Record summary: An RNA of 207 nucleotides, treated with 2A3 and DMS and read out base by base. For DMS, 5,919 sequencing reads were counted. Reactivities are given for positions 27 through 156. The 2A3 profile rests on 444 reads.

RNA sequence: GGGAACGACUCGAGUAGAGUCGAAAAAUUGCACAGGCUGGCGCUAUCGUUGGGCGCGUGGAUCAGCUUGAGCUAGAUGUUAGCGAAAUUGACGGCGAGCUUACCGCCCAAGGCCAAAGGGUAGAUGGACUUUUUGCAUCUAUCGAUACUCAAUUCAUGCUUCUGUUAAAUUCGUUUAACAGAAGCAAAAAGAAACAACAACAACAAC
Reactivity to 2A3 in 0.01 (KOAc 150mM, MgCl2 10mM, bicine 150mM(pH8.5), 24C), signal-to-noise 1, nucleotides 027 to 156: a010u220u130g050c010a010c000a000g030g020c000u070g030g030c020g010c100u100a070u290c060g150u030u060g000g000g000c050g000c060g000u070g080g030a120u120c030a010g000c000u020u040g030a010g000c000u040a000g010a260u190g050u240u060a020g000c000g050a080a090a190u030u160g030a010c010g010g030c000g000a010g000c030u060u100a010c000c020g000c000c060c020a060a050g010g000c000c010a070a000a000g150g000g020u000a020g000a000u000g070g050a040c050u100u090u060u190u270g010c050a000u000c000u000a030u000c010g010a040u040a040c020u070c070a000a190u050u110c030a040
Reactivity to DMS in 0.01 (KOAc 150mM, MgCl2 10mM, bicine 150mM(pH8.5), 24C), signal-to-noise 3, nucleotides 027 to 156: a120u010u000g000c030a160c030a040g010g020c050u000g020g030c050g020c050u000a060u020c050g010u000u000g000g030g020c000g040c070g030u000g030g010a130u010c010a060g030c050u000u010g020a150g040c020u000a070g020a190u000g000u000u010a050g030c010g010a060a060a180u000u000g010a090c060g000g020c040g030a140g030c120u010u000a060c030c040g010c020c000c070a070a100g000g020c040c060a040a090a170g020g010g040u010a010g010a050u000g020g010a100c170u000u000u010u000u010g010c030a030u000c010u010a030u000c010g010a160u000a040c040u000c030a020a130u000u000c060a230